[RMDB]
RNA sequence: GGGAACGACUCGAGUAGAGUCGAAAAUCUUAGCGUUUCGACGCUAAGAAAACGUGGUGGAGGUGGUGGAAAGCUCGGCAUUAAAGGGAUAAAAACAUCUUCAUAUAGGGUCGUUCGCGACCCUAAACUAAUGCUCAACAUUCGUGUUGAGCAUUAGAAAAGAAACAACAACAACAAC
Reactivity to DMS in 0.01 (KOAc 150mM, MgCl2 10mM, bicine 150mM(pH8.5), 24C), signal-to-noise 4, nucleotides 027 to 126: u000c000u000u000a010g010c000g020u000u000u010c170g010a040c010g020c000u010a000a000g010a030a050a080a130c140g010u000g010g020u010g010g000a090g000g000u000g000g020u000g000g010a080a070a110g010c050u000c070g020g010c080a090u000u010a080a100a110g000g000g000a100u010a020a060a070a070a070c110a070u010c030u000u000c070a070u010a150u000a010g010g000g020u000c010g020u000u000c180g020c030g010a010c000c000c000u000a000a020a120
Reactivity to 2A3 in 0.01 (KOAc 150mM, MgCl2 10mM, bicine 150mM(pH8.5), 24C), signal-to-noise 3, nucleotides 027 to 126: u000c000u010u000a000g000c010g020u000u050u090c230g080a010c000g000c000u010a000a000g000a000a000a000a000c070g080u110g010g010u070g030g050a080g000g020u080g010g030u040g020g060a090a030a000g040c030u020c080g030g000c000a020u100u150a120a040a060g090g000g000a020u110a070a160a020a020a000c040a070u070c010u120u070c020a000u160a000u060a170g010g000g000u000c000g000u020u040c060g030c010g040a020c000c030c010u000a000a000a000
Description:
An RNA of 177 nucleotides, treated with DMS and 2A3 and read out base by base. In probing experiments dimethyl sulfate is read out at A N1 and C N3, which are open when not base-paired. The RNA was probed in 150 mM KOAc, 10 mM MgCl2 and 150 mM bicine (pH 8.5) at 24 C. The DMS profile rests on 4,755 reads. Reactivities are rounded to 0.1 and cut off at 0 and 3. Values cover nucleotides 27 to 126. It was measured as part of the RMDB library M2PK50.